[RMDB]
RNA sequence: GGGAACGACUCGAGUAGAGUCGAAAAGAAAGGCCAAGGCAGGAAUGAAACAGGCCAUGAAUGUUGGAGUGAAGCAACUGGCCUCCUCGUGCUAAGCGGCUACUGUGAGUUCUUUCCACUCCCCCAAACGUAUCAUAUGCUUCGGCAUAUGAUACGUAAAAGAAACAACAACAACAAC
Reactivity to 2A3 in 0.01 (KOAc 150mM, MgCl2 10mM, bicine 150mM(pH8.5), 24C), signal-to-noise 2, nucleotides 027 to 126: g010a010a030a000g040g000c010c010a000a090g040g000c030a000g130g100a080a080u140g080a080a110a010c060a020g040g010c000c060a030u130g130a220a050u090g020u070u040g120g080a130g090u130g090a090a000g020c010a010a070c010u030g020g000c000c030u050c010c020u020c030g030u060g030c020u030a000a120g040c030g060g020c040u030a020c020u080g090u010g090a030g020u050u000c000u010u010u030c000c020a040c050u040c000c010c010c000c030a060a130
Reactivity to DMS in 0.01 (KOAc 150mM, MgCl2 10mM, bicine 150mM(pH8.5), 24C), signal-to-noise 3, nucleotides 027 to 126: g010a060a120a130g010g010c030c060a040a130g020g010c030a030g000g020a060a080u000g010a120a090a100c220a070g010g040c010c030a060u010g010a100a110u010g000u000u000g010g000a120g030u000g000a110a060g010c020a060a100c080u000g000g000c020c010u010c100c040u010c050g010u010g000c060u000a080a140g010c100g010g000c000u020a020c020u000g000u010g030a050g000u000u000c170u010u000u000c020c010a210c090u010c020c020c000c010c060a040a100